[RMDB]
RNA sequence: GGGAACGACUCGAGUAGAGUCGAAAAAGAGGCUAUUACGAUAGCCUCAACAAGAGGCGGUCACUGUCAUGAUGAAUUAUUUCAGAGUGGGAAUACCGCUGUUAAACGCACGUAUACGUACGUGCGAACACUUAUAUCUGUUCGCAGAUAUAAGUGUAAAAGAAACAACAACAACAAC
Reactivity to DMS in 0.01 (KOAc 150mM, MgCl2 10mM, bicine 150mM(pH8.5), 24C), signal-to-noise 9, nucleotides 027 to 126: a090g010a010g010g010c000u000a010u010u010a120c180g030a040u000a000g010c000c000u000c000a030a050c170a090a110g010a160g000g000c000g000g010u000c020a010c010u000g000u000c000a010u000g000a300u000g000a020a030u020u030a170u020u000u000c000a010g000a300g010u000g000g010g000a210a020u010a010c000c000g000c000u000g000u020u010a050a090a190c010g010c000a000c000g010u000a020u010a100c190g040u000a000c000g010u000g010c000g000a070
Reactivity to 2A3 in 0.01 (KOAc 150mM, MgCl2 10mM, bicine 150mM(pH8.5), 24C), signal-to-noise 9, nucleotides 027 to 126: a000g000a000g000g000c010u000a000u030u070a070c260g070a020u010a000g000c000c000u000c000a000a000c020a020a030g160a070g020g000c010g000g000u000c000a000c040u000g010u020c010a000u020g020a010u010g010a020a040u260u180a120u110u190u020c010a010g020a010g030u010g010g030g020a080a090u200a200c000c000g010c000u000g000u020u140a060a120a000c000g000c000a000c000g000u010a020u020a040c300g050u010a000c000g000u010g000c000g000a010

Annotation
An RNA of 177 nucleotides, treated with DMS and 2A3 and read out base by base. Conditions: 150 mM KOAc, 10 mM MgCl2 and 150 mM bicine (pH 8.5), 24 C. It was measured as part of the RMDB libraries RFM100 and RFMREP. For 2A3 the reverse transcriptase was SuperScript II with manganese.